The data come from the RNA Mapping Database (RMDB), library RNAMAK. This 207-nucleotide RNA was probed chemically with 2A3. The 2A3 profile rests on 4,463 reads. 2A3 adducts were read by reverse transcription with SuperScript II with manganese.
[RMDB]
RNA sequence: GGGAACGACUCGAGUAGAGUCGAAAAGGGGUCCACGUUGAAAUCGACGGAGCAUCGAUCAUACACUGAAGCCUCCACGGUGUAUGGGAGCUCCGGUCGAUGGAGUGGACGGAGGCACCCAAACAAGCUUACCCUAGUUCGCUAGGGUAAGCUUGAACGUUAGUGCAUUGUUCGCAAUGCACUAACGAAAAGAAACAACAACAACAAC
Reactivity to 2A3 in 0.01 (KOAc 150mM, MgCl2 10mM, bicine 150mM(pH8.5), 24C), signal-to-noise 2, nucleotides 027 to 156: g080g020g030g040u020c020c000a030c040g060u130u130g020a010a020a010u000c010g010a010c000g000g000a000g020c010a030u300c020g000a000u000c000a000u000a000c000a010c020u050g060a090a000g020c000c010u040c000c000a010c010g000g000u000g000u000a010u000g000g010g000a020g000c020u000c000c010g010g020u030c000g000a000u000g010g010a040g000u000g010g000a000c010g000g000a000g000g020c010a040c010c000c010a050a050a050c000a000a000g000c000u000u000a000c000c000c000u000a010g020u080u070c290g010c150u000a010g030g000g020u000a000a000g000c010u000u010g000a010a000